An RNA of 177 nucleotides, treated with DMS and 2A3 and read out base by base. Reactivities are given for positions 27 through 126. For DMS, 3,918 sequencing reads were counted.
[RMDB]
RNA sequence: GGGAACGACUCGAGUAGAGUCGAAAAGAUAUGGACGUCAUCGAUCUAGUCACCGAAGAACUCGGAAACGAGGGAGGUGUCUAGGGAGACGUCCUAAGUCAAACUAAACCACUUCGGUGGUUUAGAAGUACCGUUUAUACUUCGGUAUAAACGGUACAAAAGAAACAACAACAACAAC
Reactivity to DMS in 0.01 (KOAc 150mM, MgCl2 10mM, bicine 150mM(pH8.5), 24C), signal-to-noise 4, nucleotides 027 to 126: g010a040u000a300u000g000g000a010c000g030u000c010a210u010c130g010a050u020c000u000a000g010u000c000a000c000c000g010a080a150g000a130a240c010u010c000g000g000a100a070a180c010g010a010g000g000g000a080g030g030u000g010u000c000u010a000g000g000g010a040g010a020c000g020u000c000c000u000a000a080g000u000c040a120a110a300c000u000a020a000a000c000c000a010c010u000u010c240g030g010u000g000g000u000u000u000a000g000a060a110
Reactivity to 2A3 in 0.01 (KOAc 150mM, MgCl2 10mM, bicine 150mM(pH8.5), 24C), signal-to-noise 3, nucleotides 027 to 126: g030a010u070a030u150g000g010a000c000g030u000c030a300u300c080g050a010u020c030u000a000g010u020c000a000c000c010g120a270a060g000a040a040c000u000c010g000g030a100a050a050c020g010a010g040g000g000a030g010g000u010g000u000c000u000a000g020g010g010a030g000a000c000g000u010c000c000u010a030a000g020u000c030a030a050a060c000u010a000a000a000c010c000a000c000u030u050c300g150g000u000g040g000u000u000u000a000g000a040a010
Annotation: DMS (dimethyl sulfate) methylates the pairing face of unpaired adenines and cytosines. Source: RMDB library TTRDEL, as collected in RNAgym.